An RNA of 177 nucleotides, treated with DMS and 2A3 and read out base by base. Reactivities are given for positions 27 through 126. The reactions ran in a buffer of 150 mM KOAc, 10 mM MgCl2 and 150 mM bicine (pH 8.5), at 24 C. For 2A3 the reverse transcriptase was SuperScript II with manganese. For 2A3, 17,000 sequencing reads were counted. The data come from the RNA Mapping Database (RMDB), library OK2TST.

[RMDB]
RNA sequence: GGGAACGACUCGAGUAGAGUCGAAAAUUGGUCUUGAGUCAUUGAAUAAGAUUUCAGUCAAAACAAGAAAGCAUCUCGUGGACAGUCGACUGUGACAUGCACUGCUUGAUUGGGAGAGGGGCAGCCACACUAGUACUAGGUUCGCCUAGUACUAGUGAAAAGAAACAACAACAACAAC
Reactivity to DMS in 0.01 (KOAc 150mM, MgCl2 10mM, bicine 150mM(pH8.5), 24C), signal-to-noise 9, nucleotides 027 to 126: u010u000g010g010u010c020u000u000g010a090g010u010c060a070u000u010g020a090a080u010a120a110g010a130u010u000u000c040a040g010u010c050a070a050a100a100c070a050a050g000a100a070a090g000c040a050u000c050u000c060g020u000g020g010a080c060a060g010u010c120g010a070c070u000g010u010g010a070c090a070u000g010c070a070c060u000g010c060u000u000g000a150u000u000g010g000g010a080g010a080g010g010g000g020c040a050g010c050c080a160
Reactivity to 2A3 in 0.01 (KOAc 150mM, MgCl2 10mM, bicine 150mM(pH8.5), 24C), signal-to-noise 9, nucleotides 027 to 126: u030u050g050g000u020c010u030u070g020a010g030u050c050a090u050u110g120a140a080u200a200a100g080a140u070u130u040c020a010g020u020c010a020a030a080a120c020a040a040g070a090a050a010g040c000a030u030c020u030c070g040u050g020g030a030c020a040g040u070c030g050a110c060u050g040u050g060a040c010a040u090g000c030a030c070u030g030c030u070u060g040a080u060u080g030g020g000a040g020a020g010g010g000g000c000a010g030c010c010a040